RNA sequence: GGGAACGACUCGAGUAGAGUCGAAAAAACUCAGCUAGGGAGAGUAUAACAUUCAUGUUGACGAGAGCUAGACGAAACACAGAGGAAAAUUAUUAAUCACUGGAUAGUAUUAGUAAUGACUCUGUGUAAAACUCUUCUACGUUCGCGUAGAAGAGAACGAUACGUAGGACUUCGGUCCUACGUAUCGAAAAGAAACAACAACAACAAC
Reactivity to DMS in 0.01 (KOAc 150mM, MgCl2 10mM, bicine 150mM(pH8.5), 24C), signal-to-noise 1, nucleotides 027 to 156: a040a030c040u000c020a070g040c030u000a040g040g010g040a100g000a120g070u000a090u010a070a110c070a050u010u000c140a170u000g050u000u000g040a100c050g010a150g000a180g020c050u000a090g010a170c060g000a140a060a060c000a000c000a020g010a030g000g000a050a090a220a030u000u000a010u000u000a050a000u000c070a070c060u000g000g030a190u020a120g050u000a070u000u000a000g020u000a000a010u010g000a140c020u000c000u000g000u000g000u000a010a020a060a140c020u010c000u000u000c000u000a030c000g050u010u010c300g030c000g040u020a000g000a020a030g010a000g010a020a020
Reactivity to 2A3 in 0.01 (KOAc 150mM, MgCl2 10mM, bicine 150mM(pH8.5), 24C), signal-to-noise 3, nucleotides 027 to 156: a000a000c020u020c000a000g020c060u070a030g040g040g010a070g020a030g050u110a100u070a210a050c080a040u080u170c050a070u130g030u040u030g050a020c040g010a010g020a020g130c010u030a020g030a080c040g020a020a070a000c000a000c000a000g000a010g010g020a070a220a130a000u000u000a000u000u010a000a000u010c050a000c040u040g050g080a150u300a300g010u020a000u010u000a000g020u010a010a010u010g010a010c000u010c000u000g000u000g010u000a000a000a000a000c000u010c000u010u000c000u000a000c000g010u010u040c270g000c000g060u010a000g000a000a000g000a000g000a010a020